Chemical mapping of a 177-nucleotide RNA with DMS and 2A3.
DMS adducts were read by reverse transcription with MarathonRT.
Conditions: 150 mM KOAc, 10 mM MgCl2 and 150 mM bicine (pH 8.5), 24 C.
Source: RMDB library TTRDES, as collected in RNAgym.
RNA sequence: GGGAACGACUCGAGUAGAGUCGAAAAGAUAUGGAUCUCAGGGUUCAACAGCCUUUGGUCGGAAACGACCGGGAGGACAUGAACUCUGAGAUCCUAAGUCAAACCAUGGAAGUUCGCUUCCAUGGAAUCUACACCAAAAGUUCGCUUUUGGUGUAGAAAAAGAAACAACAACAACAAC
Reactivity to DMS in 0.01 (KOAc 150mM, MgCl2 10mM, bicine 150mM(pH8.5), 24C), signal-to-noise 3, nucleotides 027 to 126: g000a010u000a080u010g000g000a000u000c000u000c000a020g000g010g020u010u000c000a120a070c130a220g000c000c000u000u000u020g020g020u000c000g000g000a030a030a050c010g010a000c000c000g020g010g000a010g020g000a030c040a300u010g010a010a020c000u000c000u000g000a000g000a010u000c000c000u000a000a040g000u000c010a180a130a250c000c000a000u000g000g010a010a010g010u000u020c270g010c010u000u000c010c000a010u000g000g000a060a050
Reactivity to 2A3 in 0.01 (KOAc 150mM, MgCl2 10mM, bicine 150mM(pH8.5), 24C), signal-to-noise 2, nucleotides 027 to 126: g020a000u040a010u050g000g000a010u020c000u000c000a000g070g030g040u040u020c090a300a080c070a280g000c000c000u020u030u110g020g000u000c000g000g000a000a010a020c000g000a010c010c000g040g070g000a000g000g000a030c130a300u300g000a010a000c010u000c000u000g000a000g000a010u000c000c000u010a010a000g010u000c010a010a010a080c000c010a000u000g010g010a000a060g020u080u230c280g090c140u000u010c000c000a000u000g000g000a000a060